[RMDB]
RNA sequence: GGGAACGACUCGAGUAGAGUCGAAAACAUCCAGUGUUCGCACUGGAUGAGAGGAAUGUGGAUGGGCAAACUACAUACCAAAAGCUGAGCUCGAAAGAGCAACGAUUUCGUCGUUCGCGACGAAAAAUCUCCUCAUUAGUUUCGACUAAUGAGGAGAAAAAGAAACAACAACAACAAC
Reactivity to DMS in 0.01 (KOAc 150mM, MgCl2 10mM, bicine 150mM(pH8.5), 24C), signal-to-noise 5, nucleotides 027 to 126: c020a010u000c000c000a000g010u000g000u000u010c210g050c010a020c000u000g000g000a000u000g000a070g020a110g010g000a100a020u010g030u000g000g000a110u000g000g020g010c090a070a060a080c060u010a050c070a040u000a090c050c040a080a070a100a130g010c110u000g000a300g010c010u000c000g010a100a060a140g010a020g020c010a050a070c220g010a230u000u000u000c000g000u010c000g030u000u020c230g010c020g000a000c000g000a000a000a030a090a100
Reactivity to 2A3 in 0.01 (KOAc 150mM, MgCl2 10mM, bicine 150mM(pH8.5), 24C), signal-to-noise 5, nucleotides 027 to 126: c000a000u000c010c000a000g000u010g040u040u080c200g030c090a000c000u000g010g000a000u000g000a020g000a010g020g060a080a060u080g020u020g040g050a090u070g050g100g100c090a070a080a020c040u060a020c030a060u110a080c010c010a080a080a030a020g060c090u100g050a020g020c000u000c010g030a060a040a020g010a000g010c010a010a040c030g040a060u000u020u020c000g000u000c010g020u030u080c250g000c020g060a010c000g000a010a010a000a000a010